[RMDB]
RNA sequence: GGGAACGACUCGAGUAGAGUCGAAAAUGUCGUAGGCCCAGAUGCCCGCGCUAAACAGGAUGUUUCUCUCCUUAGUAAGUGCUAUAAGGCUAUGAAUGCAUAUCCUCUUGUAGUCACUCCUCUUGUUACACGGUUGUCUUCGGACAACCGAAAAGAAACAACAACAACAAC
Reactivity to DMS in 0.01 (KOAc 150mM, MgCl2 10mM, bicine 150mM(pH8.5), 24C), signal-to-noise 1, nucleotides 027 to 129: u010g040u000c040g000u030a070g100g020c020c020c180a140g010a130u030g040c100c030c020g060c070g030c060u020a030a110a130c180a070g040g020a090u070g010u000u040u040c050u020c060u020c050c010u000u000a100g020u080a120a040g030u000g060c050u010a030u050a070a080g020g020c160u010a090u020g020a000a000u090g060c090a080u020a040u050c060c050u000c040u070u020g060u040a060g010u000c020a080c010u000c020c020u050c000u010u010g010u000u000a040c160a120
Reactivity to 2A3 in 0.01 (KOAc 150mM, MgCl2 10mM, bicine 150mM(pH8.5), 24C), signal-to-noise 5, nucleotides 027 to 129: u120g030u070c030g010u010a060g040g050c000c020c040a040g030a040u110g020c030c010c000g030c000g000c030u040a020a020a020c030a020g000g000a050u070g090u030u180u000c090u010c000u000c040c000u000u000a030g040u050a070a000g000u000g000c010u010a000u030a160a000g010g010c000u000a040u040g110a200a090u200g030c020a010u030a060u160c010c020u070c040u020u070g020u060a010g030u050c000a000c050u060c000c000u020c000u030u010g030u080u020a060c090a020